[RMDB]
RNA sequence: GGGAACGACUCGAGUAGAGUCGAAAAUGCCUGUCCUCGUUCACGGAAUUUAUAGAUAAUGAUUACACAGCUGCAGCACAUCUGGGUAUAGAACAAACCUGUCUGCGUGAAACAUUGGGCCAGCAGACUCACGAAGACAAUUCGUUGUCUUCGUGAGAAAAGAAACAACAACAACAAC
Reactivity to 2A3 in 0.01 (KOAc 150mM, MgCl2 10mM, bicine 150mM(pH8.5), 24C), signal-to-noise 3, nucleotides 027 to 126: u060g020c010c000u020g030u070c000c020u020c030g020u030u030c020a020c020g020g090a080a080u040u230u070a210u080a060g050a050u100a150a110u180g130a070u070u230a050c060a000c010a040g000c060u040g050c010a030g030c030a030c010a060u040c030u030g050g010g010u060a060u010a090g040a050a030c000a040a120a000c020c000u020g040u020c010u020g050c050g020u020g010a060a050a000c040a070u050u190g040g000g030c000c010a020g000c010a000g020a100
Reactivity to DMS in 0.01 (KOAc 150mM, MgCl2 10mM, bicine 150mM(pH8.5), 24C), signal-to-noise 3, nucleotides 027 to 126: u010g000c020c010u000g010u010c010c010u010c080g010u000u000c040a120c070g000g000a070a080u000u000u010a160u000a080g000a100u010a070a110u010g000a100u020u000a070c060a080c050a050g010c060u000g000c040a040g000c050a160c040a050u010c080u000g000g010g000u000a080u020a050g010a060a120c100a080a050a130c110c050u000g000u000c040u010g010c020g030u010g020a070a090a020c100a160u000u000g010g010g000c040c070a090g000c050a040g010a110
The data come from the RNA Mapping Database (RMDB), library OK2TST. An RNA of 177 nucleotides, treated with 2A3 and DMS and read out base by base. The RNA was probed in 150 mM KOAc, 10 mM MgCl2 and 150 mM bicine (pH 8.5) at 24 C.